[RMDB]
RNA sequence: GGGAACGACUCGAGUAGAGUCGAAAAACUGGCACACACGCUCGGCUAUCGGCAUGGGGACGGUGGAAUCGUAAACUCCGAUGUUGCGUUGUUCUCUGAUAACGGGGAUCGGGACGGAACCGAAUUAGCCGACCCGACACGCGAUGUCGCGGACUCACUCCAUUAGGGGAUUCGUCCCCUAAUGGAGAAAAGAAACAACAACAACAAC
Reactivity to 2A3 in 0.01 (KOAc 150mM, MgCl2 10mM, bicine 150mM(pH8.5), 24C), signal-to-noise 2, nucleotides 027 to 156: a000c060u060g040g000c060a010c010a000c000a040c170g040c050u070c060g060g000c060u060a020u150c020g000g000c030a080u130g020g010g010g080a030c020g000g020u060g000g070a030a080u110c010g020u130a080a000a080c050u020c050c040g010a030u050g040u070u040g010c050g060u040u070g050u040u000c030u000c010u120g090a140u090a250a060c020g000g040g010g030a020u000c010g000g000g040a040c050g000g030a030a010c080c080g030a090a060u090u010a130g040c000c000g020a030c010c010c000g000a030c010a010c040g000c020g010a060u100g020u140c020g010c080g010g010a020c000u020c060a070